[RMDB]
RNA sequence: GGGAACGACUCGAGUAGAGUCGAAAAAAAAAAGUUUGAUCACAGAAUUAUGUCAAUCACCACAUGUUUAGUCAGUUGUCUAGGCUUGGGGGGAAAACUGACGUGCAAAACAAUGCUGGGGAGAGUCCAUAGGUAUCGACUUCGGUCGAUACCUAUGAAAAGAAACAACAACAACAAC
Reactivity to DMS in 0.01 (KOAc 150mM, MgCl2 10mM, bicine 150mM(pH8.5), 24C), signal-to-noise 1, nucleotides 027 to 126: a000a080a110a040a080a150g000u000u000u000g000a120u010c140a090c070a140g010a250a060u000u020a040u000g000u010c050a090a090u000c010a100c020c010a010c050a040u000g000u010u000u010a080g000u000c010a010g000u000u000g020u010c060u010a060g040g020c080u010u000g020g060g000g000g010g010a070a010a000a000c020u010g010a000c010g060u000g040c190a020a030a000a020c060a050a100u000g000c200u010g030g000g000g030a020g010a170g000u000c050
Conditions: 150 mM KOAc, 10 mM MgCl2 and 150 mM bicine (pH 8.5), 24 C.
Chemical mapping of a 177-nucleotide RNA with DMS.
Reactivities are rounded to 0.1 and cut off at 0 and 3.
For DMS, 701 sequencing reads were counted.
For DMS the reverse transcriptase was MarathonRT.
Source: RMDB library OK2TRN, as collected in RNAgym.
Values cover nucleotides 27 to 126.